[RMDB]
RNA sequence: GGGAACGACUCGAGUAGAGUCGAAAAAAAGAUAUGGAUUUACUACCCACCGCUACCCAUGUCAACAGCAUCUUUCGGAAACGAAAGAUGACAUGACACGAGUAGCGAGGUAAAUCCUAAGUCAAAAGAGCAAUGUAAUCUUCGGAUUACAUUGCUCAAAAGAAACAACAACAACAAC
Reactivity to DMS in 0.01 (KOAc 150mM, MgCl2 10mM, bicine 150mM(pH8.5), 24C), signal-to-noise 1, nucleotides 027 to 126: a150a100a100g000a080u010a210u000g010g000a010u000u000u050a000c000u000a100c180c000c050a300c090c000g000c010u000a000c000c000c000a090u000g000u000c000a000a040c300a210g000c000a000u000c000u040u000u000c000g040g000a080a130a150c000g030a000a000a000g000a010u010g000a030c080a140u000g000a030c000a000c060g060a000g030u000a000g000c010g010a000g040g000u000a000a000a010u000c000c000u010a030a170g000u000c130a050a040a080a110
An RNA of 177 nucleotides, treated with DMS and read out base by base. The RNA was probed in 150 mM KOAc, 10 mM MgCl2 and 150 mM bicine (pH 8.5) at 24 C.